Structure probing data (DMS and 2A3) for a 177-nucleotide construct. For 2A3, 2,554 sequencing reads were counted. The RNA was probed in 150 mM KOAc, 10 mM MgCl2 and 150 mM bicine (pH 8.5) at 24 C. The DMS profile rests on 1,099 reads.
RNA sequence: GGGAACGACUCGAGUAGAGUCGAAAAGAUAUGGAUCUGAACUACGCUUGCCGUUAUACUCGCAUAGACAGCUUCUCGGAAACGAGAAGUCGAGUGAGUAUAACGGGCAAGCGCAGAUCCUAAGUCAGUAUCAAAUAGGCUUCGGCCUAUUUGAUACAAAAGAAACAACAACAACAAC
Reactivity to DMS in 0.01 (KOAc 150mM, MgCl2 10mM, bicine 150mM(pH8.5), 24C), signal-to-noise 2, nucleotides 027 to 126: g010a050u000a300u000g000g030a000u000c000u010g000a170a120c240u000a300c040g020c000u010u000g010c000c000g020u000u010a000u000a010c000u000c000g080c040a300u000a170g000a060c300a030g000c020u010u010c010u010c020g030g010a150a070a150c000g000a000g000a000a000g000u000c030g030a030g010u010g030a030g000u000a000u000a010a010c000g020g000g000c020a000a000g000c010g000c000a010g010a030u000c010c010u000a020a050g010u000c040a140
Reactivity to 2A3 in 0.01 (KOAc 150mM, MgCl2 10mM, bicine 150mM(pH8.5), 24C), signal-to-noise 1, nucleotides 027 to 126: g080a000u090a040u180g020g000a000u010c020u020g030a200a140c180u210a040c300g000c010u000u000g020c000c000g010u000u000a000u010a010c010u010c010g040c020a070u160a300g080a020c020a020g000c030u000u000c000u050c010g080g000a090a100a050c000g000a000g010a020a000g000u060c010g010a040g010u010g010a000g000u010a000u010a020a000c000g010g000g000c000a000a000g000c000g030c000a010g000a000u000c020c000u000a130a000g070u030c070a000